An RNA of 177 nucleotides, treated with DMS and 2A3 and read out base by base. 2A3 adducts were read by reverse transcription with SuperScript II with manganese. Source: RMDB libraries RFM100 and RFMREP, as collected in RNAgym.
RNA sequence: GGGAACGACUCGAGUAGAGUCGAAAAAUUCACAGCAAUACAUCAAAGUAGUAUGAAAGUUGGCCAGUAUAAAUAAAUUCCCUGUUAACGGAAAGAGGGUUUGCAAAUCCGACGUCGUGAGACACGGAGUAACGCUUAUGUUCGCAUAAGCGUUACUAAAAGAAACAACAACAACAAC
Reactivity to DMS in 0.01 (KOAc 150mM, MgCl2 10mM, bicine 150mM(pH8.5), 24C), signal-to-noise 5, nucleotides 027 to 126: a100u010u010c040a050c060a100g000c080a070a070u000a050c060a070u000c090a070a090a100g020u020a070g010u030a060u010g000a050a080a110g020u000u000g010g000c060c040a070g000u010a060u020a030a040a040u020a050a040a130u010u000c010c010c000u020g010u010u020a090a100c100g010g000a010a040a050g000a160g010g020g010u010u000u010g030c100a050a080a100u010c000c010g000a130c180g020u000c010g010u040g010a160g010a030c040a080c070g010g010
Reactivity to 2A3 in 0.01 (KOAc 150mM, MgCl2 10mM, bicine 150mM(pH8.5), 24C), signal-to-noise 3, nucleotides 027 to 126: a020u160u110c040a020c010a020g060c020a050a010u090a100c020a050u120c030a080a130a030g040u040a120g020u000a070u050g030a050a030a060g100u070u040g050g000c010c000a060g040u040a090u040a190a100a000u070a010a050a020u030u030c000c000c000u040g020u040u140a090a070c020g040g000a010a060a000g040a040g010g020g000u060u050u110g090c060a050a050a060u010c010c010g050a070c090g050u020c030g020u040g090a050g000a040c020a000c040g050g010
The RNA was probed in 150 mM KOAc, 10 mM MgCl2 and 150 mM bicine (pH 8.5) at 24 C.